[RMDB]
RNA sequence: GGGAACGACUCGAGUAGAGUCGAAAACGCUGACGAUCACCGAUCCGACCGCUGUUGAGCCGGCCGUGUCUCCGUCGGAACGGAGCGCCGCCGAGAACCUCGUGGCCAACGCCACACGCAAGCACACCGAGGCGGUCAACAAACAGCGCCUCGCCGAAAUACGCAUAUAGUUCGCUAUAUGCGUAUUAAAAGAAACAACAACAACAAC
Reactivity to DMS in 0.01 (KOAc 150mM, MgCl2 10mM, bicine 150mM(pH8.5), 24C), signal-to-noise 3, nucleotides 027 to 156: c030g040c010u010g010a100c060g010a130u000c020a100c020c020g000a040u000c050c030g020a070c010c000g030c020u000g040u010u000g010a110g000c030c010g010g070c010c060g010u000g010u010c010u010c000c010g030u020c090g000g000a190a200c010g010g000a060g020c020g020c000c010g090c020c020g010a190g010a100a100c040c010u000c040g040u010g010g020c010c030a110a100c180g000c000c080a070c060a150c070g020c030a150a120g000c040a110c050a260c060c000g010a070g040g020c000g030g010u010c020a080a070c080a060a070a100c040a060g010c010g030c030c010u000c010g010c030c040g010a130
Reactivity to 2A3 in 0.01 (KOAc 150mM, MgCl2 10mM, bicine 150mM(pH8.5), 24C), signal-to-noise 5, nucleotides 027 to 156: c040g000c020u030g030a070c070g030a060u060c090a070c300c090g020a040u020c040c060g030a040c020c020g000c060u060g080u170u100g060a020g030c030c000g000g000c000c050g030u030g020u110c010u000c000c010g080u070c150g100g090a160a050c010g000g000a010g000c010g000c010c000g000c010c020g060a080g030a100a050c030c050u070c110g000u020g000g010c050c120a120a030c150g020c020c010a040c000a000c060g040c040a060a060g050c030a050c010a020c150c050g030a020g010g000c010g000g020u020c000a010a040c010a010a050a010c010a000g030c000g030c030c010u060c020g060c030c020g050a060
Record summary: An RNA of 207 nucleotides, treated with DMS and 2A3 and read out base by base. The reactions ran in a buffer of 150 mM KOAc, 10 mM MgCl2 and 150 mM bicine (pH 8.5), at 24 C. The DMS profile rests on 7,413 reads. For 2A3, 3,741 sequencing reads were counted. It was measured as part of the RMDB library OK3TST.